[RMDB]
RNA sequence: GGGAACGACUCGAGUAGAGUCGAAAAGCGCAGAUACACACAGACAUGAGAUUCAGGGAACAACAGAGCCACACGUCAGAAACUUCCGUCAGCCGGACCUCCGGCACUGUAACCCUUUACCUGCCGGCAUAUGGUUACUCUUCGGAGUAACCAUAUGAAAAGAAACAACAACAACAAC
Reactivity to 2A3 in 0.01 (KOAc 150mM, MgCl2 10mM, bicine 150mM(pH8.5), 24C), signal-to-noise 2, nucleotides 027 to 126: g030c020g030c040a020g020a060u100a070c030a000c000a020c000a060g070a050c020a120u100g060a080g000a090u090u070c020a020g070g040g000a080a030c000a040a020c000a040g060a010g080c010c000a030c000a000c050g050u040c010a010g100a100a090a030c010u070u050c040c020g040u060c030a020g030c050c020g030g020a060c010c030u050c000c000g020g000c000a000c020u030g020u030a010a050c040c000c000u020u060u070a010c010c020u030g030c000c000g020g030
Reactivity to DMS in 0.01 (KOAc 150mM, MgCl2 10mM, bicine 150mM(pH8.5), 24C), signal-to-noise 4, nucleotides 027 to 126: g000c070g030c040a020g010a110u000a060c090a050c070a070c100a040g000a080c060a080u000g020a100g000a100u000u010c080a040g010g000g010a070a050c080a040a060c050a060g000a100g000c010c030a040c060a050c080g010u000c070a040g000a070a080a070c070u010u010c060c010g010u000c070a090g010c070c020g010g000a100c150c190u020c020c000g010g010c000a010c080u010g000u010a050a080c080c050c040u010u000u000a050c060c260u000g000c010c020g010g000
The record gives the reactivity of an RNA of 177 nucleotides to 2A3 and DMS. For 2A3 the reverse transcriptase was SuperScript II with manganese. The data come from the RNA Mapping Database (RMDB), library RFMREP. The RNA was probed in 150 mM KOAc, 10 mM MgCl2 and 150 mM bicine (pH 8.5) at 24 C. Values cover nucleotides 27 to 126.